[RMDB]
RNA sequence: GGGAACGACUCGAGUAGAGUCGAAAAAGACAUGGCUGAGACGGCAACAUCUCCAUAAAGUUCUUGGCUAGUUCUGAAGGGCUUGCUAUUCUUCAGGUACUUCUUUGGAAGAAUACCUCUUGCUAUGGCUGUCCUCCUAAUUCGUUAGGAGGACAGCAAAAGAAACAACAACAACAAC
Reactivity to DMS in 0.01 (KOAc 150mM, MgCl2 10mM, bicine 150mM(pH8.5), 24C), signal-to-noise 1, nucleotides 027 to 126: a100g000a230c080a060u000g020g010c060u020g000a000g010a070c150g000g000c110a090a130c130a110u020c080u000c000c050a040u060a110a040a030g010u010u000c010u000u000g000g040c000u000a040g020u010u000c020u000g020a060a040g080g020g000c050u000u000g000c060u000a130u000u000c030u000u000c080a040g000g030u010a010c060u000u010c020u000u000u000g040g040a010a090g010a220a050u000a040c020c000u000c040u010u000g000c040u000a050u000g000
Reactivity to 2A3 in 0.01 (KOAc 150mM, MgCl2 10mM, bicine 150mM(pH8.5), 24C), signal-to-noise 2, nucleotides 027 to 126: a000g080a010c030a040u100g010g000c050u050g000a010g000a050c060g010g000c030a090a000c010a080u010c010u000c010c020a050u080a060a070a010g030u010u090c020u070u030g010g000c040u030a010g000u080u000c060u120g060a090a160g060g020g040c000u010u060g000c020u120a060u200u040c050u060u080c010a040g050g030u000a020c000u020u060c040u090u060u150g140g010a080a040g020a080a040u160a300c020c000u000c000u050u040g030c050u050a050u050g090